Structure probing data (2A3 and DMS) for a 177-nucleotide construct.

[RMDB]
RNA sequence: GGGAACGACUCGAGUAGAGUCGAAAACUCAAACCAACCCCCAUUUACUACAGAAAGGGCCCUUGGGACUCCUGCACUUAGCAUUGUGAGUGGCAAUGCGGGUUGUCCAAGCUGUGUGGUGGUCCGGGGUGACAUCAUUUUUCGAAAUGAUGUCACCAAAAGAAACAACAACAACAAC
Reactivity to 2A3 in 0.01 (KOAc 150mM, MgCl2 10mM, bicine 150mM(pH8.5), 24C), signal-to-noise 1, nucleotides 027 to 126: c000u000c020a000a030a080c030c040a030a040c010c000c020c060c000a000u100u130u110a020c030u020a010c000a030g070a120a130a000g050g000g000c040c080c010u050u030g080g040g050a040c000u000c000c030u020g000c010a030c070u080u180a080g030c020a060u060u110g080u080g180a200g160u180g020g000c000a000a000u010g020c000g040g020g000u120u080g000u000c020c000a000a010g000c020u000g010u040g020u030g110g020u030g000g000u010c010c020g000g020
Reactivity to DMS in 0.01 (KOAc 150mM, MgCl2 10mM, bicine 150mM(pH8.5), 24C), signal-to-noise 2, nucleotides 027 to 126: c070u000c020a120a060a180c100c090a110a300c060c030c000c010c050a150u020u000u010a080c110u010a060c080a050g010a130a110a100g010g010g000c010c040c020u010u010g000g020g030a020c010u010c060c030u010g010c010a020c080u000u010a090g020c040a050u020u010g000u020g020a090g020u000g000g000c030a040a030u000g020c020g050g020g010u010u000g020u010c010c020a040a030g000c040u000g000u000g020u000g000g010u000g020g010u000c030c020g000g020
It was measured as part of the RMDB library OK2TRN.